[RMDB]
Conditions: 150 mM KOAc, 10 mM MgCl2 and 150 mM bicine (pH 8.5), 24 C. Chemical mapping of a 177-nucleotide RNA with 2A3. 2A3 adducts were read by reverse transcription with SuperScript II with manganese. The 2A3 profile rests on 673 reads. Reactivities are rounded to 0.1 and cut off at 0 and 3.
RNA sequence: GGGAACGACUCGAGUAGAGUCGAAAACAAUGUCUUUAUGUCUGAAGCUAAAUGCUGGGUGGAAACCGAUCUGAAGAAAGGGCCACAUGAAUUCUGUUCACAGCAUACGCUUUAUAUUAAGGAUGGCGAGUGGUCAUUAGUUCGCUAAUGACCACUCAAAAGAAACAACAACAACAAC
Reactivity to 2A3 in 0.01 (KOAc 150mM, MgCl2 10mM, bicine 150mM(pH8.5), 24C), signal-to-noise 1, nucleotides 027 to 126: c030a020a150u150g000u020c010u010u040u000a090u070g090u040c090u060g000a020a010g000c010u030a300a150a000u010g000c000u020g110g060g000u000g000g000a190a020a080c010c000g010a020u000c010u170g210a200a090g010a030a080a000g020g000g090c000c000a000c000a010u060g050a010a030u190u170c090u260g060u070u030c000a000c000a070g020c000a010u020a020c020g010c000u090u070u000a040u000a010u010u020a010a000g050g000a010u020g120g030c060